[RMDB]
RNA sequence: GGGAACGACUCGAGUAGAGUCGAAAAGGAAUGCUCACCGUUGGCUUGCUUGCUAGCACAAAGUCGCUAAAGGUGCGUUGCGUAUACUUUCUCGUGCUAUCGUUGUGUAAGUAGGCUUUAUGCACAACCUUCCUAGUGUCUUCGGACACUAGGAAGGAAAAGAAACAACAACAACAAC
Reactivity to 2A3 in 0.01 (KOAc 150mM, MgCl2 10mM, bicine 150mM(pH8.5), 24C), signal-to-noise 1, nucleotides 027 to 126: g040g020a070a080u110g020c030u030c010a070c030c020g050u020u090g000g040c020u040u040g000c000u090u030g040c040u100a040g000c020a010c000a050a080a030g030u110c050g060c070u120a170a030a020g000g000u100g010c040g090u040u100g040c040g100u030a070u040a280c030u080u060u040c090u030c010g000u030g000c040u080a040u140c090g070u070u070g070u040g000u150a000a050g020u040a050g040g000c000u000u110u050a020u030g020c000a000c030a040a120
Reactivity to DMS in 0.01 (KOAc 150mM, MgCl2 10mM, bicine 150mM(pH8.5), 24C), signal-to-noise 2, nucleotides 027 to 126: g010g000a110a110u000g000c080u000c020a090c030c010g000u010u000g010g010c020u000u010g000c010u000u000g010c030u010a080g030c060a100c120a060a080a060g010u000c290g000c050u000a020a060a100g010g000u000g010c170g020u010u010g010c050g000u000a110u010a150c020u000u000u000c090u020c100g020u000g030c050u000a070u010c140g000u020u000g020u000g000u030a070a070g030u000a050g000g000c080u000u010u000a050u030g060c030a030c090a070a150